[RMDB]
RNA sequence: GGGAACGACUCGAGUAGAGUCGAAAAGAACUCGCCGACCACCUGAAAGCUAUCCUGACGAGACCGGGAACGUACUCGCAACGAGCACGAGUGCAUCACGCAUGAUAAUUCGCCGAUACGUACGGAAACCUUCUCUGCGGGAUCCAGGUGUAUUGCGUCCUGCACCUAAAUUCGUUUAGGUGCAGGAAAAAGAAACAACAACAACAAC
Reactivity to 2A3 in 0.01 (KOAc 150mM, MgCl2 10mM, bicine 150mM(pH8.5), 24C), signal-to-noise 4, nucleotides 027 to 156: g050a080a020c020u030c070g040c020c030g130a230c020c010a020c000c020u040g090a160a080a030g060c050u050a030u020c000c000u020g020a080c030g000a010g000a010c080c180g000g010g010a020a020c000g010u000a000c030u010c080g010c120a090a030c070g040a010g030c050a060c100g130a040g000u020g000c030a060u220c090a090c170g000c010a000u060g010a040u060a150a090u160u070c020g020c020c000g090a060u060a210c100g040u000a010c000g020g040a130a060a070c000c000u060u000c000u000c030u050g010c030g000g000g020a000u050c000c000a010g000g000u000g000u020a100u010u180g000c020g020
Reactivity to DMS in 0.01 (KOAc 150mM, MgCl2 10mM, bicine 150mM(pH8.5), 24C), signal-to-noise 1, nucleotides 027 to 156: g020a040a070c050u000c020g010c010c060g000a190c040c010a020c000c000u030g010a020a130a090g010c070u000a050u000c030c000u010g030a120c000g000a040g010a060c080c040g060g000g040a160a060c000g050u000a000c000u000c070g010c060a070a090c050g010a050g000c100a070c070g000a300g030u000g020c030a240u000c210a180c210g000c030a030u000g040a190u000a050a180u000u000c000g010c000c000g000a170u000a050c110g000u010a080c000g010g000a070a080a140c020c010u000u000c030u000c090u000g010c050g030g020g030a110u010c160c000a030g000g000u000g020u000a000u010u000g000c000g040
An RNA of 207 nucleotides, treated with 2A3 and DMS and read out base by base. It was measured as part of the RMDB library OK3TST. For 2A3 the reverse transcriptase was SuperScript II with manganese. For DMS the reverse transcriptase was MarathonRT.